The record gives the reactivity of an RNA of 177 nucleotides to DMS. Reactivities are given for positions 27 through 126. It was measured as part of the RMDB library OK2TST. Conditions: 150 mM KOAc, 10 mM MgCl2 and 150 mM bicine (pH 8.5), 24 C.
[RMDB]
RNA sequence: GGGAACGACUCGAGUAGAGUCGAAAAGAAUCAUAUGUACCAGAUAUGUCCCUGCCGAAAAUGAUAAGAGAAAAGUAUUCAGAAGGGUUUAUCGAAUCUCUUACUGCCGGUGCAUGGUUUAAUCCGAAUUAGUGGCGAUAUUCGUAUCGCCACUAAUAAAAGAAACAACAACAACAAC
Reactivity to DMS in 0.01 (KOAc 150mM, MgCl2 10mM, bicine 150mM(pH8.5), 24C), signal-to-noise 2, nucleotides 027 to 126: g000a160a070u010c040a000u000a060u000g000u020a110c090c120a130g000a070u000a050u010g000u000c010c000c010u000g000c050c020g000a070a020a060a050u010g000a100u000a040a000g010a040g000a020a070a120a200g000u000a000u000u010c020a110g000a130a120g020g010g020u000u000u000a020u000c050g000a080a210u000c010u000c020u000u000a020c050u000g010c170c040g030g000u010g030c100a020u000g020g000u000u030u000a060a100u020c020c040g000a130